[RMDB]
RNA sequence: GGGAACGACUCGAGUAGAGUCGAAAAGGCCGUGGAAUCAUCAACUAUGACUAUAUGUAUCCCCUUGGAGUAGGCAUGUCAGGUGUUUCCAUUAAGGCAAUCGACAUGUCCGGUGCGACGCGAUACAACGUCGCCCGGGUUUCGACCCGGGCGACGUAAAAGAAACAACAACAACAAC
Reactivity to 2A3 in 0.01 (KOAc 150mM, MgCl2 10mM, bicine 150mM(pH8.5), 24C), signal-to-noise 1, nucleotides 027 to 126: g060g000c000c000g000u000g020g030a030a000u090c000a000u000c020a150a100c010u300a080u010g030a060c030u000a050u000a000u300g290u130a190u130c060c060c000c000u000u300g070g000a050g000u210a060g070g010c010a000u000g060u030c030a030g000g000u000g000u000u000u000c090c000a020u210u000a020a080g030g000c000a000a090u000c080g020a010c050a160u050g010u040c000c000g200g060u060g010c030g000a000c020g030c000g000a000u000a090c090a090